[RMDB]
Chemical mapping of a 177-nucleotide RNA with DMS.
It was measured as part of the RMDB library TTRINS.
For DMS the reverse transcriptase was MarathonRT.
The reactions ran in a buffer of 150 mM KOAc, 10 mM MgCl2 and 150 mM bicine (pH 8.5), at 24 C.

RNA sequence: GGGAACGACUCGAGUAGAGUCGAAAAGAUAUGGAAUCGGUACCUGCAACAGCGUACUAACACUAGUAACGUCGGAAACGACGUUACUAGUGUUAGUACGACAUGCAGCGUACGCGAUUCCUAAGUCCAAGACCAAGAAGUUCGCUUCUUGGUCUUGAAAAGAAACAACAACAACAAC
Reactivity to DMS in 0.01 (KOAc 150mM, MgCl2 10mM, bicine 150mM(pH8.5), 24C), signal-to-noise 4, nucleotides 027 to 126: g000a110u000a300u000g010g000a010a000u000c000g010g010u000a010c010c000u000g010c000a040a090c300a280g010c010g010u010a010c010u000a010a030c000a010c000u000a010g000u000a010a000c000g020u000c000g020g000a120a130a200c010g030a020c000g000u000u010a000c000u000a000g020u000g010u000u000a000g000u000a000c000g030a010c100a160u000g000c010a000g010c300g000u000a000c020g010c000g010a010u000u010c000c010u000a030a080g000u010c050